[RMDB]
RNA sequence: GGGAACGACUCGAGUAGAGUCGAAAAUCGGGAAUGAUGUCUCAUGAACUCGUCCUUGCUGGAAAGUCACGGGGAUCUUGGAGCGUGGUGAAAACUAAACGAGCCGUUACCGAUAUUAAAGGGACCAGGUCUGUCUAUCCUUCGGGAUAGACAGACCAAAAGAAACAACAACAACAAC
Reactivity to 2A3 in 0.01 (KOAc 150mM, MgCl2 10mM, bicine 150mM(pH8.5), 24C), signal-to-noise 2, nucleotides 027 to 126: u040c010g000g000g180a060a120u110g040a080u100g180u120c000u030c010a060u100g060a000a010c000u020c020g110u100c000c030u150u060g000c090u000g000g140a200a260a100g050u100c000a000c040g000g000g020g030a060u000c050u010u080g080g000a060g010c000g000u030g030g000u070g100a100a160a000a000c020u060a170a000a000c030g020a000g020c080c000g000u000u000a040c000c000g050a100u120a050u080u280a040a040a060g000g000g020a090c070c030a030